RNA sequence: GGGAACGACUCGAGUAGAGUCGAAAACUAGAGGAAGUCAGAGGAGACUGAUCGAGAAGGAGACUGACUGAAGCUAGCUUCUCGACUUCCUAGCUUCCUGAUCAGAGGAUCUCGAAGAGCUGACUCUCUAGUCAGGAGAAGCUCUCUCUAGUCAGUCGAUGAUACUUCCAUUCGUGGAAGUAUCAUCAAAAGAAACAACAACAACAAC
Reactivity to DMS in 0.01 (KOAc 150mM, MgCl2 10mM, bicine 150mM(pH8.5), 24C), signal-to-noise 1, nucleotides 027 to 156: c030u010a130g030a110g040g000a060a090g020u020c020a090g020a230g070g020a190g030a210c030u020g010a150u000c030g020a050g000a090a080g000g020a270g000a070c000u000g000a130c090u000g010a090a040g040c030u000a080g020c040u000u000c010u000c010g000a100c020u020u010c010c040u000a100g000c020u000u000c020c070u000g010a040u000c080a120g000a150g030g000a140u000c010u000c050g010a100a040g050a230g040c020u010g000a090c000u000c050u000c020u010a110g010u010c050a130g000g010a090g010a230a070g020c010u000c000u010c010u000c000u000a120g020u010c030a070g000u000c050
Reactivity to 2A3 in 0.01 (KOAc 150mM, MgCl2 10mM, bicine 150mM(pH8.5), 24C), signal-to-noise 5, nucleotides 027 to 156: c020u020a010g010a010g060g070a230a050g040u040c050a050g020a070g110g040a050g090a090c070u070g040a140u040c030g010a020g020a080a030g110g060a050g030a050c010u050g020a030c020u090g030a060a000g030c020u020a000g050c020u100u030c050u040c050g090a080c020u080u040c010c010u000a030g020c000u000u000c000c020u040g030a090u030c020a010g100a100g240g040a050u000c010u000c040g070a100a040g020a040g090c050u030g050a110c000u000c000u010c010u100a010g030u050c050a010g030g070a070g000a040a020g020c000u000c010u000c000u010c000u020a000g010u020c020a020g070u090c050